[RMDB]
RNA sequence: GGGAACGACUCGAGUAGAGUCGAAAAGUAGGCGGCGACCGAAGCGAGGAGGAAAGCAAAGAAAGCCACGGGGCUAGCGAGUGGAUGUUCCGCCCCAAGGGGAGCCGAGUGAGGCUUAUCCCGGGGAUAGGGCACCCCUUCGGGGGUGCCAAAAGAAACAACAACAACAAC
Reactivity to 2A3 in 0.01 (KOAc 150mM, MgCl2 10mM, bicine 150mM(pH8.5), 24C), signal-to-noise 1, nucleotides 027 to 129: g110u120a020g040g040c000g020g000c020g040a060c000c000g020a000a050g050c040g000a070g080g000a030g000g040a000a000a000g050c080a050a000a060g040a060a160a000g080c000c030a020c000g020g000g000g040c000u030a000g000c000g000a020g000u060g040g070a150u130g020u000u110c000c020g000c010c000c000c000a030a120g000g000g000g000a030g000c020c000g000a000g090u170g120a000g000g000c000u010u070a080u070c000c000c010g000g000g000g000a000u000a090g050
Reactivity to DMS in 0.01 (KOAc 150mM, MgCl2 10mM, bicine 150mM(pH8.5), 24C), signal-to-noise 2, nucleotides 027 to 129: g030u040a040g000g090c070g020g010c040g000a010c050c000g000a060a040g060c120g030a040g060g000a060g000g030a010a120a000g000c130a050a030a140g010a070a000a100g010c060c010a070c130g020g000g000g040c170u020a030g000c040g040a000g010u240g070g000a000u020g010u030u050c060c120g040c000c010c000c000a040a000g000g000g130g000a050g030c020c000g000a070g000u020g000a280g050g010c010u050u050a000u130c010c000c080g010g000g000g160a090u030a000g020
The record gives the reactivity of an RNA of 170 nucleotides to 2A3 and DMS. Source: RMDB library 15KLIB, as collected in RNAgym. For DMS the reverse transcriptase was MarathonRT. Values cover nucleotides 27 to 129. The RNA was probed in 150 mM KOAc, 10 mM MgCl2 and 150 mM bicine (pH 8.5) at 24 C. 2A3 adducts were read by reverse transcription with SuperScript II with manganese.